Overview: The record gives the reactivity of an RNA of 177 nucleotides to 2A3 and DMS. For DMS, 11,489 sequencing reads were counted. Reactivities are given for positions 27 through 126. It was measured as part of the RMDB library TTRDEL. The reactions ran in a buffer of 150 mM KOAc, 10 mM MgCl2 and 150 mM bicine (pH 8.5), at 24 C.
[RMDB]
RNA sequence: GGGAACGACUCGAGUAGAGUCGAAAAGAUAUGGAUCAUGACUCCGAGGAUCAACAUGUUUGUCGGAAACGAUGAUAUGUUGGGAGGAGCAAUGUGAUCCUAAGUCAAAGCCCUCUUCGGAGGGCAAGAUCUUAAAACUGUUCGCAGUUUUAAGAUCAAAAGAAACAACAACAACAAC
Reactivity to 2A3 in 0.01 (KOAc 150mM, MgCl2 10mM, bicine 150mM(pH8.5), 24C), signal-to-noise 7, nucleotides 027 to 126: g020a010u080a020u150g000g000a000u010c010a010u060g300a190c000u010c010c000g050a300g050g000a030u030c010a000a010c000a000u020g090u150u100u280g050u040c000g010g020a050a040a040c010g010a000u030g010a000u010a000u030g010u000u010g010g000g000a010g000g000a000g010c070a040a100u220g000u020g020a000u000c000c000u010a130a030g030u030c030a040a060a070g010c000c020c020u000c010u010u050c300g190g000a010g000g000g000c010a000a000
Reactivity to DMS in 0.01 (KOAc 150mM, MgCl2 10mM, bicine 150mM(pH8.5), 24C), signal-to-noise 6, nucleotides 027 to 126: g000a030u000a300u000g000g000a000u000c000a020u010g010a120c000u000c000c000g010a090g030g000a040u010c010a010a000c010a010u000g020u000u000u010g050u000c000g010g010a130a100a190c010g010a020u000g000a010u000a010u000g000u000u000g000g000g010a030g010g010a020g020c110a060a040u010g010u000g000a010u000c000c000u000a030a110g000u000c040a080a120a170g000c000c000c000u000c000u000u010c190g020g010a010g020g000g010c000a000a000